[RMDB]
RNA sequence: GGGAACGACUCGAGUAGAGUCGAAAAAAGAGAGCAACGGGGCUAGCGAGUGGAUGUUCCGCCUCCCCAGGGUCCCGAGUGAGGCUUAUCCCGGGGAACUCGGCCCAGUCCCGAGAUGGCCGCGUCCUACCACAACAGUUCGCUGUUGUGAAAAGAAACAACAACAACAAC
Reactivity to DMS in 0.01 (KOAc 150mM, MgCl2 10mM, bicine 150mM(pH8.5), 24C), signal-to-noise 9, nucleotides 027 to 129: a060a030g000a050g010a020g020c040a080a080c030g010g020g020g020c030u020a090g030c040g020a100g030u040g000g020a070u030g000u020u030c060c020g040c120c060u000c010c010c010c000a090g000g010g010u010c060c010c010g010a100g020u010g000a110g000g010c160u010u050a050u000c010c000c000g020g000g020g030a040a030c060u020c010g000g040c040c070c070a110g000u020c020c010c000g010a080g020a080u030g000g000c000c010g000c090g010u020c030c010u010a100c180
Reactivity to 2A3 in 0.01 (KOAc 150mM, MgCl2 10mM, bicine 150mM(pH8.5), 24C), signal-to-noise 9, nucleotides 027 to 129: a000a000g160a000g000a000g000c010a030a050c020g010g010g010g000c010u050a040g060c020g060a030g030u120g020g030a070u110g080u170u070c030c030g050c020c020u040c000c000c000c000a020g020g000g010u050c000c000c020g010a050g030u140g040a070g020g020c040u080u110a050u080c010c010c000g000g000g000g010a050a040c020u010c020g060g010c000c020c010a020g040u030c000c000c010g030a050g000a030u060g020g000c000c000g040c010g020u010c010c010u050a110c030
An RNA of 170 nucleotides, treated with DMS and 2A3 and read out base by base. The RNA was probed in 150 mM KOAc, 10 mM MgCl2 and 150 mM bicine (pH 8.5) at 24 C. Values cover nucleotides 27 to 129.